[RMDB]
RNA sequence: GGGAACGACUCGAGUAGAGUCGAAAAGCAUUGGGAAAGUUAAUCAAAAGUGCAUCAAAACUUUCCCUAAACGAAAUCAAAAUCGUUAUGUUGCACUUUUGACAUCGAUUAAGAUGAAUAGACACAACUAUUCAAUCGCUUUCGAGCGAUUGAAUAGAAAAGAAACAACAACAACAAC
Reactivity to 2A3 in 0.01 (KOAc 150mM, MgCl2 10mM, bicine 150mM(pH8.5), 24C), signal-to-noise 1, nucleotides 027 to 126: g030c000a060u110u240g030g020g000a020a010a020g040u030u120a120a030u060c010a020a030a000a000g010u010g020c030a030u070c080a100a000a160a090c030u010u000u000c010c000c010u000a010a010a000c010g000a000a000a060u250c060a070a030a040a150u010c010g000u050u070a060u300g170u070u000g000c000a000c000u010u000u000u010g010a010c000a010u000c010g190a190u190u170a160a090g020a010u040g010a090a060u040a070g090a040c030a000c010a270a090
Reactivity to DMS in 0.01 (KOAc 150mM, MgCl2 10mM, bicine 150mM(pH8.5), 24C), signal-to-noise 1, nucleotides 027 to 126: g020c090a160u000u020g040g030g000a030a050a030g020u000u000a060a150u000c010a010a020a000a000g000u000g000c000a080u000c020a070a080a060a080c020u000u000u000c000c010c020u020a040a030a080c010g010a000a000a090u010c240a050a150a170a060u000c000g020u000u000a070u000g000u000u000g060c020a000c000u000u000u000u000g020a110c060a030u010c020g020a120u010u010a100a120g000a010u000g020a030a130u000a080g010a090c090a050c170a020a120